[RMDB]
RNA sequence: GGGAACGACUCGAGUAGAGUCGAAAACAGUAAAAGUAGCAACAGUGGUGAUUAACAGCCUGAUAGGGUGCUGCAGAGGCCCACUGUUUUGCUACUAAAGGUCUCUGCAGACGAUGAAAGACAUCGACCGGUAUCCCUAGUUCGCUAGGGAUACCGGAAAAGAAACAACAACAACAAC
Reactivity to 2A3 in 0.01 (KOAc 150mM, MgCl2 10mM, bicine 150mM(pH8.5), 24C), signal-to-noise 1, nucleotides 027 to 126: c090a080g210u300a050a020a000a000g000u000a020g020c000a000a000c000a020g000u000g150g000u130g000a190u140u220a020a150c080a000g060c000c000u250g130a010u060a190g000g000g030u020g000c070u000g050c040a070g000a000g070g000c000c000c090a020c030u000g070u000u040u000u060g020c020u000a000c000u000a000a000a000g030g050u060c000u000c000u070g000c000a030g000a130c000g010a010u050g100a000a000a280g000a000c000a000u000c000g040a000